Record summary:
Conditions: 150 mM KOAc, 10 mM MgCl2 and 150 mM bicine (pH 8.5), 24 C. Structure probing data (DMS and 2A3) for a 177-nucleotide construct. Values cover nucleotides 27 to 126. It was measured as part of the RMDB library OK1LIB.
RNA sequence: GGGAACGACUCGAGUAGAGUCGAAAACGUCAGAAGACGAAGUCGGUCCAUCUGCGGUAAGAGACCGACAUAGAGUUCGAAGCAGAACGGACAACCGCAGACACACGAUUGGAGUGUGAAUGAGAGACCACGUAGGCAUGUUCGCAUGCCUACGUGGAAAAGAAACAACAACAACAAC
Reactivity to DMS in 0.01 (KOAc 150mM, MgCl2 10mM, bicine 150mM(pH8.5), 24C), signal-to-noise 2, nucleotides 027 to 126: c000g000u010c090a140g040a210a120g030a070c050g040a270a020g000u000c010g070g010u000c000c160a170u030c050u000g000c030g030g000u000a100a090g000a220g000a040c000c000g100a060c040a000u000a090g000a150g060u000u010c020g000a080a030g040c130a100g000a060a140c010g000g010a040c130a220a010c010c000g020c000a000g000a140c000a000c000a000c070g010a290u010u010g000g000a220g040u000g000u000g010a080a250u000g000a140g040a000g000a220
Reactivity to 2A3 in 0.01 (KOAc 150mM, MgCl2 10mM, bicine 150mM(pH8.5), 24C), signal-to-noise 2, nucleotides 027 to 126: c010g000u000c020a020g000a220a040g020a110c070g000a140a000g000u000c000g000g030u020c010c000a000u000c000u000g000c000g000g050u030a060a020g060a000g000a030c000c030g030a000c000a000u090a000g100a000g010u010u030c020g000a010a000g230c140a100g000a000a020c000g000g080a040c010a160a000c030c000g020c000a000g000a000c060a000c010a000c000g120a070u210u250g220g010a210g020u000g000u020g000a000a100u240g040a020g000a020g020a070